[RMDB]
RNA sequence: GGGAACGACUCGAGUAGAGUCGAAAAACACAGUUGUGGCCGAGUUAAUAGCCCUGGGUAUAGUAACAAUGUUGAAUAUGACUCUUAAUUGAGGAAAUGGGUGAUCCGCAGCCAAAUCCUAAGGACACUAUUGUGUCUACUUCGGUAGACACAAUAGAAAAGAAACAACAACAACAAC
Reactivity to DMS in 0.01 (KOAc 150mM, MgCl2 10mM, bicine 150mM(pH8.5), 24C), signal-to-noise 3, nucleotides 027 to 126: a070c090a060c110a100g030u010u000g010u000g010g020c030c020g010a090g010u000u000a040a060u000a070g010c000c010c000u000g000g000g010u010a040u000a070g010u000a030a050c040a030a040u000g020u000u000g010a100a070u010a040u010g000a100c020u000c010u000u000a070a120u000u000g010a060g000g000a050a070a140u000g000g010g020u010g000a070u000c050c060g010c070a110g020c020c030a020a050a150u000c010c020u010a070a080g010g000a100c200a120
Reactivity to 2A3 in 0.01 (KOAc 150mM, MgCl2 10mM, bicine 150mM(pH8.5), 24C), signal-to-noise 1, nucleotides 027 to 126: a000c050a020c010a080g070u130u040g000u060g000g000c000c010g030a030g070u020u050a210a080u070a120g010c000c000c000u080g030g000g000u090a040u000a050g060u050a100a000c020a050a080u100g050u070u050g030a050a030u170a100u130g020a040c000u010c010u060u080a060a040u140u110g060a010g000g030a000a090a060u090g060g050g010u010g050a120u000c080c000g060c020a000g050c020c030a030a050a030u050c030c000u050a010a020g090g020a000c000a010